Source: RMDB library OK2TRN, as collected in RNAgym. Chemical mapping of a 177-nucleotide RNA with 2A3 and DMS. The reactions ran in a buffer of 150 mM KOAc, 10 mM MgCl2 and 150 mM bicine (pH 8.5), at 24 C.
RNA sequence: GGGAACGACUCGAGUAGAGUCGAAAAGCCGGGGGCCAUGCACGGCAGGUACUGGGAGAAGGGGAAGCGCUCGGCACUUCGGCUUCCUGACCGUUCCUCAGCCGAGGAACUUCAGCCGAGCAGCUUCUGGACAUAAUUGAUUCGUCAAUUAUGUCCAAAAAGAAACAACAACAACAAC
Reactivity to 2A3 in 0.01 (KOAc 150mM, MgCl2 10mM, bicine 150mM(pH8.5), 24C), signal-to-noise 4, nucleotides 027 to 126: g040c020c010g010g010g010g000g000c030c020a060u100g040c070a030c090g040g000c020a010g030g020u050a090c070u060g020g030g030a120g060a080a080g050g030g010g000a010a000g000c010g000c000u010c000g000g000c010a030c050u030u020c010g000g000c020u040u050c020c010u090g080a160c030c070g010u030u030c000c000u030c020a040g050c050c110g000a000g010g000a040a060c010u150u100c080a010g010c010c010g010a000g000c010a040g000c010u040u010c020
Reactivity to DMS in 0.01 (KOAc 150mM, MgCl2 10mM, bicine 150mM(pH8.5), 24C), signal-to-noise 9, nucleotides 027 to 126: g010c020c020g020g000g010g010g010c070c050a060u010g010c080a080c090g010g010c050a050g010g000u000a050c090u000g000g010g010a080g010a110a090g010g010g010g010a010a020g010c010g010c000u000c010g010g010c010a190c050u000u000c020g010g000c020u000u010c070c040u000g000a090c190c070g010u000u000c010c000u000c090a070g010c090c080g000a010g000g000a070a060c130u000u000c210a130g000c000c000g000a010g010c020a070g020c010u000u000c030
Values cover nucleotides 27 to 126. For 2A3, 10,478 sequencing reads were counted.